[RMDB]
RNA sequence: GGGAACGACUCGAGUAGAGUCGAAAAGAUAUGGACGCUGAGUGCUUUUGACGAAUAGUGUGGAUCGGAAACGAUCCACAGUUCGAUAAGCACCAGCGUCCUAAGUCAAAGAAGCCUUCGGGCUUCACGUUUCCUUUUCCUUCGGGAAAAGGAAACGAAAAGAAACAACAACAACAAC
Reactivity to DMS in 0.01 (KOAc 150mM, MgCl2 10mM, bicine 150mM(pH8.5), 24C), signal-to-noise 1, nucleotides 027 to 126: g030a050u010a300u020g000g020a010c000g050c000u010g000a120g030u000g020c000u000u000u020u000g020a300c130g000a010a000u030a130g070u000g060u000g020g000a000u000c000g000g020a060a130a150c010g010a040u020c000c000a000c000a010g040u000u000c010g030a120u010a010a020g030c000a010c000c000a020g020c000g000u060c010c000u000a000a010g030u080c080a140a180a110g050a020a030g000c020c030u000u010c220g020g000g030c010u000u000c010a080
Chemical mapping of a 177-nucleotide RNA with DMS.